[RMDB]
RNA sequence: GGGAACGACUCGAGUAGAGUCGAAAAGAGGUUACGGAGUUAGGAGACUAACUGGACAACCAUGCACUCUCCAGUUAGUCAUUUAGAGAGUUCAGUCUCUAAAUCUGGAGUGCAGAGUCAGAGGCGGGCAGUCGUCACUAUUCGUAGUGAUGACUGCAAAAGAAACAACAACAACAAC
Reactivity to 2A3 in 0.01 (KOAc 150mM, MgCl2 10mM, bicine 150mM(pH8.5), 24C), signal-to-noise 6, nucleotides 027 to 126: g050a020g020g020u070u070a040c090g020g020a040g020u070u060a050g070g070a060g010a030c010u010a020a000c000u010g010g010a020c030a050a020c050c030a020u020g000c010a020c030u040c010u000c010c000a000g000u020u040a020g020u010c010a000u010u010u010a020g000a000g010a010g030u160u260c090a090g140u050c010u000c000u000a010a020a030u020c040u030g030g010a030g000u010g000c010a000g010a010g020u010c020a010g010a020g090g020c000g000g060
Reactivity to DMS in 0.01 (KOAc 150mM, MgCl2 10mM, bicine 150mM(pH8.5), 24C), signal-to-noise 9, nucleotides 027 to 126: g010a070g010g010u000u000a090c110g010g000a050g000u000u000a090g010g010a150g000a070c000u000a010a020c010u000g010g000a070c120a060a100c070c060a120u000g010c030a040c040u000c100u000c010c010a010g000u010u000a050g000u000c080a030u000u000u000a020g000a020g000a060g010u010u010c280a140g000u000c000u000c010u000a010a020a100u000c050u000g000g010a040g010u000g010c020a050g000a090g000u000c070a060g000a070g000g010c060g010g000
The data come from the RNA Mapping Database (RMDB), library OK2TRN. The record gives the reactivity of an RNA of 177 nucleotides to 2A3 and DMS. The DMS profile rests on 24,901 reads. The 2A3 profile rests on 16,095 reads. Values are in units of 0.01, from 0 to 300, in steps of 10. For DMS the reverse transcriptase was MarathonRT.